[RMDB]
Structure probing data (2A3 and DMS) for a 207-nucleotide construct.
RNA sequence: GGGAACGACUCGAGUAGAGUCGAAAAUUUGUAAGGCUUGCAGUUCUUGUAUGGUCAGAACCUAUGUCGAUGGAAACAUUAUUUUUCGCUGCAGCUGCGGCGAAAGCGUUCAAGGGGAUAGUCAAAACUUGCUCGUCUCUAGCAAGGUGUACCACACCCGGAGUGUAAAAUUCGUUUUACACUCCGGAAAAGAAACAACAACAACAAC
Reactivity to 2A3 in 0.01 (KOAc 150mM, MgCl2 10mM, bicine 150mM(pH8.5), 24C), signal-to-noise 2, nucleotides 027 to 156: u070u020u080g030u050a070a020g010g000c050u040u020g040c030a080g040u060u050c020u100u100g070u090a070u090g010g000u040c020a020g010a050a010c030c080u100a090u110g080u100c060g070a040u090g020g030a010a130a020c040a050u050u070a120u090u230u010u010u020c000g010c000u040g020c030a170g080c180u190g000c080g000g010c000g010a010a000a000g030c030g040u090u060c030a050a040g060g020g000g010a010u050a060g050u080c030a030a050a050a090c040u000u050g000c010u040c080g110u030c020u000c010u020a010g000c000a020a000g000g000u000g000u020a110c040c020a050c010a020c020
Reactivity to DMS in 0.01 (KOAc 150mM, MgCl2 10mM, bicine 150mM(pH8.5), 24C), signal-to-noise 2, nucleotides 027 to 156: u000u000u050g010u000a080a140g000g010c020u010u020g000c030a060g000u000u000c050u000u010g010u000a080u010g000g030u010c040a140g010a110a100c050c050u020a060u000g020u000c040g020a080u000g000g010a160a080a070c040a100u010u000a240u010u000u000u000u000c010g030c010u010g010c020a290g020c150u000g000c070g050g000c000g000a010a010a060g020c150g000u010u010c060a060a120g000g000g000g030a110u000a100g000u010c070a050a040a070a080c000u000u020g000c000u010c040g010u000c120u000c050u000a090g000c030a030a010g010g010u010g030u010a120c020c010a080c060a160c140
Annotation
The 2A3 profile rests on 990 reads. DMS adducts were read by reverse transcription with MarathonRT.